[RMDB]
An RNA of 177 nucleotides, treated with DMS and 2A3 and read out base by base. Source: RMDB library OK1LIB, as collected in RNAgym. Conditions: 150 mM KOAc, 10 mM MgCl2 and 150 mM bicine (pH 8.5), 24 C. DMS adducts were read by reverse transcription with MarathonRT.
RNA sequence: GGGAACGACUCGAGUAGAGUCGAAAACAAAACAACUACACCGACCUGAACAAAGCAUGCCCCAAAGACCCAUAUGCACUUCCCUGUAUUGACACCCUAGUGAAUGCGAUCUCAGAAACAAAACAAACGCACUAGUAGAGUUCGCUCUACUAGUGCGAAAAGAAACAACAACAACAAC
Reactivity to DMS in 0.01 (KOAc 150mM, MgCl2 10mM, bicine 150mM(pH8.5), 24C), signal-to-noise 1, nucleotides 027 to 126: c050a020a060a080a090c200a030a040c190u010a080c090a070c010c030g050a020c050c000u020g000a050a030c020a140a110a080g000c050a110u000g060c050c000c020c010a040a080a080g000a090c010c000c040a060u050a100u000g000c080a000c040u000u000c020c000c050u020g050u040a020u040u000g000a000c110a080c000c010c020u030a060g000u000g000a050a000u000g000c000g000a130u000c130u010c090a050g000a020a050a020c150a120a000a050a020c170a030a040a160
Reactivity to 2A3 in 0.01 (KOAc 150mM, MgCl2 10mM, bicine 150mM(pH8.5), 24C), signal-to-noise 2, nucleotides 027 to 126: c040a000a040a030a020c060a000a070c010u130a030c030a040c000c030g040a050c000c020u020g040a070a040c030a060a020a000g070c020a030u090g000c000c000c000c000a000a080a000g010a020c000c020c010a000u050a020u160g010c000a020c050u020u000c010c020c000u000g010u030a080u000u130g000a010c020a010c000c000c030u010a020g030u000g150a050a040u040g000c020g050a090u030c030u010c020a060g090a090a090a050c060a010a110a010a020c050a010a090a020